Record summary: Structure probing data (2A3 and DMS) for a 207-nucleotide construct. It was measured as part of the RMDB library OK3TST.

RNA sequence: GGGAACGACUCGAGUAGAGUCGAAAAAGUUCUAGUCCUCACCUAAGAUCAGACUAACACGGCCCUCAAAGGAAGAGCACUCGGUUGGGCUUUGUGGUGGGGAUGAGUGUCUCAUUUUUAGUCCCAAAUUAAAAACGAGAUUUUGGGCUGUACAUCACUCGUAAUUAGUGUUCGCACUAAUUACGAGAAAAGAAACAACAACAACAAC
Reactivity to 2A3 in 0.01 (KOAc 150mM, MgCl2 10mM, bicine 150mM(pH8.5), 24C), signal-to-noise 4, nucleotides 027 to 156: a000g040u050u020c010u010a000g030u000c000c000u010c000a010c010c010u090a130a040g060a200u140c080a060g100a140c060u070a100a020c060a010c080g000g000c000c000c040u020c080a130a140a040g110g010a080a050g040a000g050c050a020c020u030c040g100g000u090u040g010g000g000c000u040u070u150g060u020g010g000u000g000g000g030g010a000u010g000a010g000u030g050u040c010u010c040a090u040u210u040u040u210a020g080u090c000c010c010a000a010a010u080u090a040a060a060a030a030c130g020a070g020a160u040u010u000u030g010g000g000c010u040g040u090a070c040a090u080c040a010
Reactivity to DMS in 0.01 (KOAc 150mM, MgCl2 10mM, bicine 150mM(pH8.5), 24C), signal-to-noise 2, nucleotides 027 to 156: a090g030u010u000c000u010a200g000u000c000c000u000c010a060c030c020u010a140a120g020a140u000c110a110g030a100c050u000a060a040c070a110c080g000g010c000c040c020u000c040a120a130a180g000g030a120a100g010a060g030c010a040c060u000c040g020g030u000u000g040g010g020c010u010u000u020g020u000g010g030u000g020g020g020g000a030u000g000a110g080u000g010u000c020u030c010a090u010u000u010u000u000a040g020u000c040c040c100a040a100a040u000u000a010a030a010a050a060c070g000a080g000a160u000u010u000u000g010g010g040c060u000g030u010a040c090a170u000c070a240

DMS adducts were read by reverse transcription with MarathonRT.